RNA sequence: GGGAACGACUCGAGUAGAGUCGAAAACCCCUUAACUGGCUGUUUAACCUGAUAAAGUUCCCUGCGCAGUUCCUGUACUUCGUUGUUAUCCCAAGCAGGAUCAAACAUCCCUCCGAGAUCUUCACGGGUAGGGAAGUACAUUCGUGUACUUCCCUACAAAAGAAACAACAACAACAAC
Reactivity to DMS in 0.01 (KOAc 150mM, MgCl2 10mM, bicine 150mM(pH8.5), 24C), signal-to-noise 4, nucleotides 027 to 126: c050c000c000c160u010u020a080a120c070u010g010g010c040u000g010u000u020u010a110a130c040c030u000g000a090u040a080a110a100g010u010u000c010c000c000u010g000c060g030c050a120g000u010u000c000c010u000g000u010a070c070u010u010c090g020u010u010g020u000u000a100u010c020c000c030a110a150g030c090a070g000g010a040u000c050a060a100a090c080a090u000c030c010c000u000c030c020g010a130g010a060u010c050u010u000c060a100c120g000g020
Reactivity to 2A3 in 0.01 (KOAc 150mM, MgCl2 10mM, bicine 150mM(pH8.5), 24C), signal-to-noise 4, nucleotides 027 to 126: c000c000c010c000u100u110a070a060c050u050g050g040c020u020g060u040u090u080a090a060c010c020u090g060a120u110a120a130a020g030u040u040c000c000c000u010g000c040g000c010a020g000u020u040c000c000u030g040u040a050c020u010u060c020g060u010u110g060u040u110a070u080c000c010c000a010a040g030c040a030g000g050a040u030c060a010a060a020c020a060u050c000c010c000u010c010c010g030a030g000a110u020c030u060u030c100a030c060g040g020
This 177-nucleotide RNA was probed chemically with DMS and 2A3.
Reactivities are given for positions 27 through 126.
The RNA was probed in 150 mM KOAc, 10 mM MgCl2 and 150 mM bicine (pH 8.5) at 24 C.